The record gives the reactivity of an RNA of 177 nucleotides to DMS. The RNA was probed in 150 mM KOAc, 10 mM MgCl2 and 150 mM bicine (pH 8.5) at 24 C. The data come from the RNA Mapping Database (RMDB), library OK2TRN.
RNA sequence: GGGAACGACUCGAGUAGAGUCGAAAACUACAUGCAUUUGAAAGUACCUUGUUACAAUUGUCCAGGGAGACGAAUAAGGCACUCCAACGACAGGCUUCAUUUUUUUCUGCCACUUGUUUAAUGCGCCUAACAGGCAGUCUUUCGAGACUGCCUGUUAAAAAGAAACAACAACAACAAC
Reactivity to DMS in 0.01 (KOAc 150mM, MgCl2 10mM, bicine 150mM(pH8.5), 24C), signal-to-noise 1, nucleotides 027 to 126: c020u000a090c160a090u000g010c000a040u000u000u000g000a090a110a050g010u010a060c030c020u000u000g010u000u010a090c130a100a130u010u020g010u020c040c060a280g000g020g010a040g010a030c050g010a040a020u010a040a030g010g000c000a010c010u000c110c070a070a110c150g010a030c110a030g010g010c130u010u020c110a000u000u000u000u000u000u000u000c040u000g020c040c040a130c130u000u000g010u010u000u020a030a050u000g000c200g000c100c080